[RMDB]
RNA sequence: GGGAACGACUCGAGUAGAGUCGAAAAGAUAUGGAUGGGAUUCGAUAAGAUGGAUUCGGAAACGAAUCCCAUCUUUUGACGAAUUAGUCCUAAGUCGCAGUCACAAACUAUUCGUAGUUUGUGACAACCCCAUUCAUACCUUCGGGUAUGAAUGGGGAAAAGAAACAACAACAACAAC
Reactivity to DMS in 0.01 (KOAc 150mM, MgCl2 10mM, bicine 150mM(pH8.5), 24C), signal-to-noise 2, nucleotides 027 to 126: g000a040u000a190u010g020g010a020u000g000g000g030a030u000u010c000g020a120u000a060a080g010a040u000g010g000a170u000u000c010g010g000a100a050a140c020g000a010a010u000c070c040c010a000u000c000u000u000u000u040g040a120c160g000a020a050u010u010a300g000u000c010c000u000a100a170g010u000c050g020c280a130g000u000c010a030c010a000a010a020c000u000a000u010u000c220g020u010a020g020u000u000u000g000u000g000a000c000a020a040
Reactivity to 2A3 in 0.01 (KOAc 150mM, MgCl2 10mM, bicine 150mM(pH8.5), 24C), signal-to-noise 2, nucleotides 027 to 126: g020a040u120a060u150g020g020a010u040g290g300g050a000u020u010c010g020a030u070a240a050g000a010u050g130g020a090u170u030c050g000g040a010a080a060c000g010a010a010u050c060c000c080a000u030c000u000u020u000u020g070a010c000g000a030a020u040u020a040g120u000c000c010u030a130a040g030u030c030g000c150a070g020u000c010a010c000a000a000a000c000u000a000u060u080c240g150u090a000g000u010u000u000g010u000g000a000c000a000a010

Structure probing data (DMS and 2A3) for a 177-nucleotide construct. The reactions ran in a buffer of 150 mM KOAc, 10 mM MgCl2 and 150 mM bicine (pH 8.5), at 24 C. For DMS the reverse transcriptase was MarathonRT. Source: RMDB library TTRDEL, as collected in RNAgym.